[RMDB]
An RNA of 177 nucleotides, treated with DMS and 2A3 and read out base by base.
The RNA was probed in 150 mM KOAc, 10 mM MgCl2 and 150 mM bicine (pH 8.5) at 24 C.
For 2A3, 3,903 sequencing reads were counted.
2A3 adducts were read by reverse transcription with SuperScript II with manganese.
Reactivities are given for positions 27 through 126.
The data come from the RNA Mapping Database (RMDB), library OK1LIB.
As a SHAPE reagent, 2A3 marks flexible, mostly unpaired nucleotides at the ribose 2'-OH.
DMS adducts were read by reverse transcription with MarathonRT.

RNA sequence: GGGAACGACUCGAGUAGAGUCGAAAAAGUUUAACGUUGACAACACCAAUAUGGAUGCAAAUGUAGCCCCGCCACCGACGCCAGCAACGCCGAAUGAACUAAUAAUCACGACAGCGAUUAACGUUACCUUUAACCGUGGAUUCGUCCACGGUUAAAGAAAAGAAACAACAACAACAAC
Reactivity to DMS in 0.01 (KOAc 150mM, MgCl2 10mM, bicine 150mM(pH8.5), 24C), signal-to-noise 5, nucleotides 027 to 126: a110g000u010u000u010a030a050c160g010u010u000g010a100c160a100a100c010a070c030c020a100a090u020a100u010g000g010a050u030g010c060a010a050a100u010g000u020a140g000c030c010c010c010g020c060c060a080c050c020g000a030c060g010c030c020a060g020c050a050a030c040g000c010c020g000a050a060u020g010a040a070c080u030a100a110u010a060a040u020c030a050c030g000a080c220a060g030c040g000a080u010u010a120a040c070g020u000u000a040c270
Reactivity to 2A3 in 0.01 (KOAc 150mM, MgCl2 10mM, bicine 150mM(pH8.5), 24C), signal-to-noise 4, nucleotides 027 to 126: a000g080u080u090u080a130a040c110g000u030u060g080a050c070a150a010c000a070c020c040a050a080u180a170u260g100g000a030u030g040c050a060a090a040u130g050u150a050g010c000c000c000c030g020c010c000a020c030c000g010a010c020g040c040c000a010g020c000a030a050c060g000c010c020g060a050a030u080g020a010a000c010u070a030a120u140a140a010u080c030a010c050g130a060c050a060g010c050g100a050u050u020a040a060c050g020u020u070a030c000